[RMDB]
RNA sequence: GGGAACGACUCGAGUAGAGUCGAAAAUCACAAUAGGCCUUUGCGCGCAUCGAUACGUUGCGUGAGGUACACAGUCAUCUACAGCGGAGUGUUGUUACACCAUGAUGGACAGCUUACGCACGGCUGCCAAUCAUAGCCACUUCGGUGGCUAUGAUUGAAAAGAAACAACAACAACAAC
Reactivity to 2A3 in 0.01 (KOAc 150mM, MgCl2 10mM, bicine 150mM(pH8.5), 24C), signal-to-noise 2, nucleotides 027 to 126: u050c010a020c020a040a180u120a240g150g000c060c040u120u120u250g020c030g000c000g000c010a050u000c060g210a090u090a300c090g020u040u100g020c000g000u020g010a010g000g110u110a030c000a000c000a020g080u000c010a040u000c040u160a100c050a050g070c000g090g070a110g030u040g030u180u110g070u070u150a030c020a020c040c040a080u150g030a120u060g070g000a000c010a020g040c010u080u060a030c010g000c070a020c030g040g000c010u020g000c000
Reactivity to DMS in 0.01 (KOAc 150mM, MgCl2 10mM, bicine 150mM(pH8.5), 24C), signal-to-noise 3, nucleotides 027 to 126: u010c040a090c140a110a130u000a050g010g030c010c010u000u010u010g030c020g010c030g000c030a050u000c120g010a140u020a090c130g020u030u000g020c020g030u000g000a020g000g000u000a080c040a130c090a040g010u000c020a070u010c080u000a110c150a080g020c030g010g010a110g010u010g010u000u010g000u000u000a090c070a080c090c090a090u020g000a130u000g000g010a080c030a020g020c020u010u000a130c120g010c040a090c140g010g000c010u000g000c040